[RMDB]
RNA sequence: GGGAACGACUCGAGUAGAGUCGAAAACACGCGGGUUCAAGUUCACGGAGACACUCCUGGAACUCUACUUCCCGGAACUCUUUAAAGAGAACAGCAAGAAGUUCCGCUUCGUGACCCAGAUCCAGAUCAUGCAAGAGAAGCUGGGAUACGCACCCAGACCGUAAUAAAGAUUCGUCUUUAUUACGGUAAAAGAAACAACAACAACAAC
Reactivity to DMS in 0.01 (KOAc 150mM, MgCl2 10mM, bicine 150mM(pH8.5), 24C), signal-to-noise 4, nucleotides 027 to 156: c080a120c110g030c060g000g010g000u000u000c040a050a100g030u000u000c030a080c060g010g000a040g000a100c090a120c100u000c040c020u000g030g020a030a030c010u000c040u010a080c040u000u000c040c010c030g020g010a070a130c010u000c000u010u000u010a100a160a160g010a090g020a050a130c040a090g010c070a080a090g000a110a100g020u000u000c000c010g020c020u000u000c020g030u000g010a090c020c010c030a140g010a080u020c000c020a130g020a110u000c040a080u000g020c120a090a110g010a120g010a050a110g020c020u010g010g000g000a110u000a050c070g000c070a300c000c000c000a070g000
Reactivity to 2A3 in 0.01 (KOAc 150mM, MgCl2 10mM, bicine 150mM(pH8.5), 24C), signal-to-noise 7, nucleotides 027 to 156: c090a010c040g060c080g030g000g020u110u090c060a110a050g000u030u030c010a030c040g010g040a020g030a040c080a040c120u090c030c040u070g010g000a020a010c020u020c020u130a100c040u030u020c010c020c000g010g030a050a070c010u020c000u070u190u200a140a200a020g060a010g020a060a020c030a030g100c050a060a050g080a060a010g070u030u010c000c010g010c000u010u020c010g010u010g010a020c010c000c000a020g010a030u040c020c030a020g030a090u090c040a060u150g090c060a150a040g030a030g030a200a030g050c000u010g000g000g010a040u090a130c060g000c030a040c000c000c010a000g030